[RMDB]
RNA sequence: GGGAACGACUCGAGUAGAGUCGAAAAUGCCUGCGCCGAUACGCCCUCGGCCUCCACCGUGUUGAUCUGCCCACAAGGCGGCUUGACGAGAUUGCGACUGGAACGAAGUUGUCCUGAGGGACGGGGAGGAUAAGGAGGAAUUCGUUCCUCCUUAUCCAAAAGAAACAACAACAACAAC
Reactivity to DMS in 0.01 (KOAc 150mM, MgCl2 10mM, bicine 150mM(pH8.5), 24C), signal-to-noise 7, nucleotides 027 to 126: u020g010c010c010u000g010c060g000c020c010g010a070u010a090c120g000c030c030c030u000c050g020g020c030c030u010c040c040a050c050c040g010u010g010u000u000g010a050u010c020u000g000c010c000c020a100c230a130a300g000g010c020g010g000c070u000u000g010a060c060g000a080g000a100u010u010g000c040g010a060c040u000g000g010a070a110c080g010a070a090g000u010u020g010u010c010c020u010g010a170g010g010g000a140c040g000g010g010g010a240
Reactivity to 2A3 in 0.01 (KOAc 150mM, MgCl2 10mM, bicine 150mM(pH8.5), 24C), signal-to-noise 9, nucleotides 027 to 126: u110g050c000c010u030g020c020g000c000c020g040a040u050a140c040g030c000c000c010u030c020g030g000c000c010u030c010c010a070c000c020g050u040g030u120u030g030a050u000c030u060g010c000c010c000a100c020a040a020g020g000c010g010g010c020u030u060g050a040c040g020a030g070a210u050u160g040c030g030a040c030u050g030g030a040a030c030g030a080a030g040u120u090g040u060c010c010u040g020a090g010g020g010a040c020g000g010g020g010a090